[RMDB]
Chemical mapping of a 177-nucleotide RNA with DMS and 2A3. For 2A3 the reverse transcriptase was SuperScript II with manganese. The DMS profile rests on 3,971 reads.
RNA sequence: GGGAACGACUCGAGUAGAGUCGAAAAGCUCGCUUGCAUCUUAGCCAGGAUGCAAAAACAUGCCCCUUUCAAAUUUGAUUUUAAAGCGGUUACCGUGCAUUAUGGUUUGGGCGAAGAUUUGAAAUGGUCCAAAGUUAUUCUUCGGAAUAACUUUGGAAAAAGAAACAACAACAACAAC
Reactivity to DMS in 0.01 (KOAc 150mM, MgCl2 10mM, bicine 150mM(pH8.5), 24C), signal-to-noise 4, nucleotides 027 to 126: g000c050u000c080g030c150u000u000g000c010a020u010c010u000u000a100g000c190c170a130g010g000a010u010g000c010a020a020a070a100a070c120a080u010g010c040c010c010c030u000u010u000c040a020a030a040u000u010u010g000a150u010u000u010u010a040a080a160g010c090g020g000u010u000a060c060c060g030u000g000c120a090u010u020a050u000g010g010u010u000u000g010g000g010c010g010a080a070g010a030u000u000u000g000a030a030a050u000g010g000
Reactivity to 2A3 in 0.01 (KOAc 150mM, MgCl2 10mM, bicine 150mM(pH8.5), 24C), signal-to-noise 2, nucleotides 027 to 126: g000c000u040c030g060c080u030u030g010c000a010u000c000u050u060a040g070c050c060a020g030g000a020u010g020c010a080a100a000a000a000c040a030u090g030c000c010c000c040u000u000u000c040a050a020a010u130u150u200g030a040u010u010u110u150a070a070a000g010c000g020g000u040u020a050c030c050g010u000g010c040a070u050u120a020u250g070g020u000u030u040g110g040g000c020g020a040a020g030a090u080u010u090g050a210a080a060u240g090g040
Overview
DMS adducts were read by reverse transcription with MarathonRT. The RNA was probed in 150 mM KOAc, 10 mM MgCl2 and 150 mM bicine (pH 8.5) at 24 C.